[RMDB]
RNA sequence: GGGAACGACUCGAGUAGAGUCGAAAAGAAAGAGAGUUAGACACGGUUGAUCUCACCCUUCGGGGGGGCUAUAGAGAUCACUGGAAGCACUACUGGACAACCGGAACAUUGCAGCAAUGCAGCCCAAAAAAUCCAAACAUCUUCGGAUGUUUGGAAACCACUUUACACGGUUCGCCGUGUAAAGUGGAAAAGAAACAACAACAACAAC
Reactivity to 2A3 in 0.01 (KOAc 150mM, MgCl2 10mM, bicine 150mM(pH8.5), 24C), signal-to-noise 1, nucleotides 027 to 156: g040a030a130a010g070a020g010a010g030u100u080a070g040a020c030a000c130g100g000u080u080g020a020u020c000u000c010a060c020c040c050u060u110c200g070g000g000g000g000g010g010c040u070a080u050a180g010a000g010a000u020c010a000c020u010g030g030a010a010g010c040a010c060u100a040c010u010g000g070a010c030a060a050c040c030g020g040a040a030c030a060u000u110g000c000a000g010c010a050a050u050g050c000a000g000c000c000c000a010a080a010a070a000a060u060c000c020a020a000a000c000a000u010c000u050u050c190g070g000a010u000g000u000u010u010g000g000a000a000a000
Chemical mapping of a 207-nucleotide RNA with 2A3. 2A3 adducts were read by reverse transcription with SuperScript II with manganese. The data come from the RNA Mapping Database (RMDB), library M2RFPK. High 2A3 reactivity points to a flexible backbone, as in loops and unpaired stretches.